[RMDB]
RNA sequence: GGGAACGACUCGAGUAGAGUCGAAAAGAGCUGGCUCCUAAUCCAGCCCCAUGUAAGCCAUUCGAAGGUUUUCGUGGCGGAGUGACAUAACCCCAUUUGCGGCUGCAGCGCAGAGAUAAGAUGGGGGAGGGGCAGAGCAGAUGUAGAGAGAUCAGUGCAGUUUAGCUUCUUUCGAGAAGCUAAACUGAAAAGAAACAACAACAACAAC
Reactivity to DMS in 0.01 (KOAc 150mM, MgCl2 10mM, bicine 150mM(pH8.5), 24C), signal-to-noise 1, nucleotides 027 to 156: g000a170g010c020u000g010g050c020u000c010c050u010a080a110u000c000c000a220g000c000c000c000c030a130u000g000u010a080a160g060c000c030a110u000u000c150g030a160a190g060g000u010u000u000u000c030g040u000g000g050c110g010g020a210g000u000g010a140c040a170u020a140a230c010c000c010c000a060u010u000u000g000c000g010g000c000u000g020c050a220g000c130g000c010a030g000a140g020a190u010a060a050g030a090u000g000g010g020g040g010a060g000g010g010g020c010a080g000a100g040c110a050g010a130u000g020u010a100g010a200g020a100g000a030u000c060a020g030u010g050
Reactivity to 2A3 in 0.01 (KOAc 150mM, MgCl2 10mM, bicine 150mM(pH8.5), 24C), signal-to-noise 2, nucleotides 027 to 156: g080a030g000c000u010g000g000c000u030c020c020u000a010a010u010c030c000a040g010c020c020c000c000a010u020g050u080a040a030g010c000c030a040u160u130c120g050a070a120g140g010u100u120u090u080c010g010u010g010g000c050g030g020a080g060u150g060a010c040a060u130a100a070c000c020c010c010a010u070u030u090g100c130g090g000c050u040g030c030a160g080c050g000c100a020g030a000g020a070u110a240a020g000a010u040g000g000g000g000g020a090g010g000g020g000c040a010g000a020g150c090a030g010a030u100g070u180a020g030a010g000a000g010a150u040c010a010g030u030g120

About this RNA
The data come from the RNA Mapping Database (RMDB), library OK3TST. An RNA of 207 nucleotides, treated with DMS and 2A3 and read out base by base. The RNA was probed in 150 mM KOAc, 10 mM MgCl2 and 150 mM bicine (pH 8.5) at 24 C.